RNA sequence: GGGAACGACUCGAGUAGAGUCGAAAACGACGAUAGUUCGCUAUCGUCGCAAGGGCUCUUUUUCUCGCUGACUUUCAGCCCCAAACAAAAAAGUCAGCAAAAUAAUCGGUGGCUUCGGCCACCGAAAGGCAAGGUAUUUAUUCGUAAAUACCUUGCCAAAAGAAACAACAACAACAAC
Reactivity to DMS in 0.01 (KOAc 150mM, MgCl2 10mM, bicine 150mM(pH8.5), 24C), signal-to-noise 1, nucleotides 027 to 126: c010g000a010c000g000a000u000a000g030u000u020c210g000c000u000a000u000c000g000u000c000g010c090a080a090g010g000g000c040u000c040u000u000u000u000u010c050u000c160g030c020u000g030a000c000u000u000u000c050a030g000c010c000c000c290a050a060a100c060a000a020a020a010a030a010g020u010c000a000g000c000a070a070a040a080u030a100a070u000c010g000g040u000g000g020c010u000u010c130g030g020c000c000a000c000c000g000a000a020a030
Reactivity to 2A3 in 0.01 (KOAc 150mM, MgCl2 10mM, bicine 150mM(pH8.5), 24C), signal-to-noise 2, nucleotides 027 to 126: c020g000a000c000g000a000u000a000g030u040u030c190g030c110u010a000u010c000g000u010c000g000c010a060a120g010g010g000c000u010c000u000u000u010u030u030c090u040c090g000c000u010g020a000c010u010u000u010c060a020g030c000c000c010c070a090a150a060c050a060a070a010a000a000a000g010u000c000a000g000c000a010a030a010a010u060a020a060u030c010g010g010u010g020g000c010u050u080c230g110g010c010c000a010c010c010g000a010a000a000